Chemical mapping of a 207-nucleotide RNA with DMS and 2A3. It was measured as part of the RMDB library M2RFPK. The DMS profile rests on 2,723 reads.
[RMDB]
RNA sequence: GGGAACGACUCGAGUAGAGUCGAAAAGUUGUGUACCUUCAUUUAAAUGAAUUGAAACAAAUUUAAUACAAGUGGAUGUAGGAUAACCGUCCGUCCUUUACAUUGGUAUAAAAGUGAUCUAAAAUUCGGCAGGGACGAGUCUUCGGACUCGUCCCAAUCGAUACUAGUAGUUCGCUACUAGUAUCGAAAAAGAAACAACAACAACAAC
Reactivity to DMS in 0.01 (KOAc 150mM, MgCl2 10mM, bicine 150mM(pH8.5), 24C), signal-to-noise 2, nucleotides 027 to 156: g000u010u000g010u030g000u000a100c030c030u000u010c040a050u000u000u000a090a210a170u010g000a080a090u000u000g000a160a150a270c040a080a080a040u000u000u000a080a070u000a080c050a040a040g020u000g010g060a070u000g000u000a040g030g010a050u000a010a130c080c120g040u020c020c050g010u000c020c010u010u000u000a050c020a030u000u000g020g000u010a000u000a060a080a020a080g010u000g010a020u000c040u010a060a090a060a160u000u000c050g010g000c110a150g030g070g020a010c010g030a030g020u000c000u010u000c300g050g010a010c000u000c010g040u020c000c020c000a000a000
Reactivity to 2A3 in 0.01 (KOAc 150mM, MgCl2 10mM, bicine 150mM(pH8.5), 24C), signal-to-noise 2, nucleotides 027 to 156: g010u010u000g020u010g020u040a030c000c010u060u020c060a160u050u150u250a140a090a050u100g030a010a030u070u040g060a080a030a030c020a040a210a080u060u100u130a080a050u130a030c020a100a020g010u040g070g080a070u050g020u060a000g000g030a010u010a060a090c040c010g060u030c030c020g010u000c000c020u050u130u000a050c020a040u030u060g130g000u070a020u060a120a100a000a010g030u020g040a030u060c020u120a040a060a110a090u100u030c010g120g000c090a060g000g000g000a010c010g000a000g000u010c010u040u050c140g070g000a000c060u000c000g050u020c000c000c000a000a000